Chemical mapping of a 177-nucleotide RNA with 2A3 and DMS. 2A3 adducts were read by reverse transcription with SuperScript II with manganese. Values are in units of 0.01, from 0 to 300, in steps of 10. For DMS, 1,680 sequencing reads were counted. The RNA was probed in 150 mM KOAc, 10 mM MgCl2 and 150 mM bicine (pH 8.5) at 24 C. For 2A3, 1,562 sequencing reads were counted. Reactivities are given for positions 27 through 126.
[RMDB]
RNA sequence: GGGAACGACUCGAGUAGAGUCGAAAAAGGUACCAUGGCUGGAUCCUAGCCAUGCUCGAUCGUGUACGAGCAGUGCGCGUCAUGCGAUCUAGCGUCUGUCGCUAGCGUGGUACGUACGACUGCAUGAAUCGCACGUGUCUUUCGAGACACGUGCGAUAAAAGAAACAACAACAACAAC
Reactivity to 2A3 in 0.01 (KOAc 150mM, MgCl2 10mM, bicine 150mM(pH8.5), 24C), signal-to-noise 2, nucleotides 027 to 126: a000g140g010u050a030c020c020a020u010g120g000c010u070g060g020a290u180c030c060u030a000g000c010c010a010u030g000c020u030c020g080a080u000c030g000u000g010u060a100c030g020a030g030c070a000g120u060g130c030g020c000g010u050c000a020u130g000c030g060a080u090c010u000a000g000c000g040u070c180u300g290u240c010g000c020u010a000g000c000g010u000g000g040u050a010c030g000u020a010c080g070a030c020u040g050c000a050u130g180a090
Reactivity to DMS in 0.01 (KOAc 150mM, MgCl2 10mM, bicine 150mM(pH8.5), 24C), signal-to-noise 2, nucleotides 027 to 126: a080g000g020u000a050c040c000a010u010g000g040c020u000g000g010a170u020c170c050u010a060g000c000c000a050u000g030c050u000c020g000a040u000c030g000u000g070u010a090c040g000a080g020c040a110g020u000g020c000g010c020g000u010c060a040u000g020c020g000a070u020c060u000a030g010c010g030u000c210u010g040u010c030g000c010u000a030g000c010g050u000g020g010u010a020c040g030u000a050c070g000a100c070u030g010c030a100u010g040a110